Conditions: 150 mM KOAc, 10 mM MgCl2 and 150 mM bicine (pH 8.5), 24 C. An RNA of 207 nucleotides, treated with 2A3 and DMS and read out base by base. For DMS the reverse transcriptase was MarathonRT. The 2A3 profile rests on 763 reads.
RNA sequence: GGGAACGACUCGAGUAGAGUCGAAAAUUAAUCAAGAUGAGUUGCAGGACAUAAAAAAACUUAUUGACUGUAUAGUGGAGAUUAGAAAAGAAGAGGAAGUUAAGCCAGGCUCAUUGGCAUCUGACUGGUCAUGUAUUUACUUAAGCACAACACAAGAUGUUCUCUUUCAGUUCGCUGAAAGAGAACAAAAAGAAACAACAACAACAAC
Reactivity to 2A3 in 0.01 (KOAc 150mM, MgCl2 10mM, bicine 150mM(pH8.5), 24C), signal-to-noise 1, nucleotides 027 to 156: u100u000a000a040u030c010a010a060g060a040u010g050a000g100u000u030g000c040a040g010g010a030c020a080u220a050a130a000a000a030a040a000c040u110u080a060u100u050g020a020c020u030g040u000a050u120a100g040u070g000g020a000g000a000u000u050a060g060a010a090a000a000g030a030a000g060a010g040g020a000a050g010u030u160a070a020g020c050c050a020g010g000c010u000c040a020u010u070g040g000c000a000u050c030u040g060a090c020u040g000g000u040c040a060u050g070u040a090u090u120u050a020c030u040u100a020a000g050c030a000c010a080a050c070a010c010a040a020g040a060
Reactivity to DMS in 0.01 (KOAc 150mM, MgCl2 10mM, bicine 150mM(pH8.5), 24C), signal-to-noise 1, nucleotides 027 to 156: u010u000a020a080u010c090a140a120g000a120u010g030a140g010u010u000g000c120a080g000g000a170c090a020u040a000a030a060a120a140a060a000c090u000u000a030u040u010g000a090c030u040g050u000a070u000a060g010u000g060g010a150g070a070u000u000a060g000a040a070a060a070g070a070a030g000a090g020g010a090a060g010u010u010a040a030g000c000c020a060g080g000c070u000c040a040u000u000g030g010c040a130u000c040u010g020a040c000u000g000g120u000c040a120u000g020u000a070u010u000u000a060c010u000u000a030a110g000c030a130c130a040a050c000a060c080a070a070g000a120